[RMDB]
RNA sequence: GGGAACGACUCGAGUAGAGUCGAAAAGAGCAUCUUCGGAUGCUCAGAGUGCGGUGACGCACUCACGGAGUCUACGGACUCCGAGGACAGCUACGGCUGUCCACUUAGUUCGUUCGCGAACUAAGAGUAAUACUUCGGUAUUACAAGGCGCACGUGAGUGCGCCAACUUCCUCUUCGGAGGAAGAGCGUAUCGUGAGAUACGCACGGUCAUAAGAGAUAAGCUAGCGUCCUAAUCUAUCCCGGGUUAUGGCGCGAAACUCAGGGAUACUAAGAGCUUCGGCUCUUAGAAAAGAAACAACAACAACAAC
Reactivity to 2A3 in 0.01 (KOAc 150mM, MgCl2 10mM, bicine 150mM(pH8.5), 24C), signal-to-noise 5, nucleotides 027 to 266: g000a000g000c000a000u010c010u080u100c270g130g000a000u000g000c000u000c000a000g000a000g000u000g000c010g010g040u080g020a010c010g000c000a000c000u000c000a010c010g000g000a010g000u000c020u050a080c290g090g000a000c000u000c000c000g010a060g000g010a000c000a000g000c010u020a010c220g120g000c000u000g010u000c000c000a010c000u000u000a000g000u000u010c010g020u020u050c300g020c010g140a000a000c000u000a000a000g060a010g030u010a000a010u000a000c010u020u070c220g100g000u010a000u000u010a010c030a040a190g010g000c000g070c000a020c020g110u120g190a130g010u000g050c000g000c000c000a010a020c000u010u000c000c010u030c020u060u070c220g100g000a000g000g010a000a010g040a030g000c000g020u000a000u000c020g010u050g090a090g000a010u020a000c010g020c020a010c050g080g020u140c060a040u110a280a090g060a010g030a070u110a240a040g090c090u100a020g000c030g000u020c010c000u000a010a000u000c010u010a050u020c010c000c000g010g000g000u010u010a020u030g010g000c000g010c000g000a010a000a000c030u030c090a070g030g070g130a040u220a180
Reactivity to DMS in 0.01 (KOAc 150mM, MgCl2 10mM, bicine 150mM(pH8.5), 24C), signal-to-noise 2, nucleotides 027 to 266: g000a010g000c000a010u000c010u020u010c210g010g000a000u000g000c010u000c000a060g000a030g030u000g030c010g000g000u000g000a120c000g030c010a010c000u000c030a110c000g000g000a010g000u010c000u000a120c150g050g000a020c010u000c000c020g030a130g010g020a020c000a010g000c010u000a110c170g020g010c000u010g030u000c010c000a070c000u000u000a010g000u000u000c000g030u000u000c170g010c000g010a000a010c000u000a000a000g020a300g010u000a000a000u000a000c020u010u000c160g030g000u000a010u000u000a000c000a170a120g000g050c010g030c050a020c040g000u030g000a290g070u000g010c000g080c000c020a030a080c000u010u000c010c010u000c000u000u030c220g000g020a040g020g000a000a010g000a060g000c000g010u000a000u000c010g000u020g010a130g000a000u020a000c000g030c000a070c160g000g000u000c110a100u030a140a100g000a090g010a180u010a070a030g010c080u020a260g010c000g000u000c000c030u000a020a010u000c010u000a050u010c000c000c000g000g010g010u000u000a000u000g010g000c000g020c000g000a040a100a050c010u000c070a040g010g010g010a170u010a160